[RMDB]
RNA sequence: GGGAACGACUCGAGUAGAGUCGAAAACUGGGAGUUCGCUCCCAGAAAAACCGGGAUGGCCGAGUGGUUAAGGCGUUGGACUUAAGAUCCAAUGGGCUAGUGCCCGCGUGGGUUCGAACCCCACUCUCGGUACCAAAAAGUCGUCGUUCGCGACGACGUGUUCUUGAAGAUUCGUCUUCAAGAACACAAAAGAAACAACAACAACAAC
Reactivity to DMS in 0.01 (KOAc 150mM, MgCl2 10mM, bicine 150mM(pH8.5), 24C), signal-to-noise 2, nucleotides 027 to 156: c010u000g040g000g020a020g040u000u010c290g040c010u000c000c000c000a020g010a010a020a040a130a070c040c010g010g010g000a080u010g010g010c000c010g020a120g010u000g020g020u000u000a090a110g020g010c010g010u010u000g000g000a030c020u000u000a140a210g010a110u000c010c000a020a040u010g000g000g000c000u000a190g010u000g000c010c020c000g010c130g010u010g000g010g020u000u000c120g000a300a150c070c000c050c010a040c050u000c000u000c010g000g000u000a030c010c010a030a070a090a160a130g020u000c000g010u000c010g010u000u000c240g010c020g000a020c010g010a000c010
Reactivity to 2A3 in 0.01 (KOAc 150mM, MgCl2 10mM, bicine 150mM(pH8.5), 24C), signal-to-noise 6, nucleotides 027 to 156: c000u000g000g010g000a010g010u090u090c120g090c100u000c000c000c000a000g000a010a030a000a000a000c010c010g000g000g010a020u030g050g000c010c020g020a050g080u230g060g200u190u100a100a070g010g000c000g010u000u000g010g000a000c010u180u210a180a070g050a180u140c000c000a000a010u020g000g010g000c030u090a090g120u050g300c010c010c000g010c000g020u050g000g000g000u010u020c010g000a010a010c000c000c000c000a010c000u000c000u000c000g020g000u020a030c000c000a020a080a070a030a040g000u000c000g000u000c000g010u040u110c230g020c010g080a000c000g000a000c010

Record summary:
Conditions: 150 mM KOAc, 10 mM MgCl2 and 150 mM bicine (pH 8.5), 24 C. Chemical mapping of a 207-nucleotide RNA with DMS and 2A3. Values cover nucleotides 27 to 156.